The record gives the reactivity of an RNA of 207 nucleotides to 2A3. The RNA was probed in 150 mM KOAc, 10 mM MgCl2 and 150 mM bicine (pH 8.5) at 24 C. It was measured as part of the RMDB library M2RFPK. For 2A3, 560 sequencing reads were counted.
RNA sequence: GGGAACGACUCGAGUAGAGUCGAAAAGUCUGUGCGUUUCCAUUUGAGUAUCCUGAAAACGGGCUUUUCAGCAUGGAACGUACAUAUUAAAUAGUAGGAUUGCAUAGUGGCCCGUAUAGCAGGCAUUGAGGCGAGGAUUGUUUCGACAAUCCUCGAAGUAUACACGCUGCUUCGGCAGCGUGUAUACAAAAGAAACAACAACAACAAC
Reactivity to 2A3 in 0.01 (KOAc 150mM, MgCl2 10mM, bicine 150mM(pH8.5), 24C), signal-to-noise 1, nucleotides 027 to 156: g080u040c040u010g000u000g040c000g000u030u160u000c000c000a000u060u000u170g020a060g040u050a120u180c000c010u010g050a000a000a070a150c010g000g000g000c000u010u010u050u070c020a000g000c010a010u040g010g010a000a000c010g000u020a000c000a000u000a000u010u190a040a060a110u100a020g110u040a030g000g040a030u000u080g000c020a070u080a090g130u040g080g000c000c030c000g010u050a060u030a100g110c010a000g100g000c020a010u010u120g070a030g060g100c010g000a000g020g000a000u000u000g000u010u110u040c040g070a000c000a000a040u000c010c000u000c000g000a000a000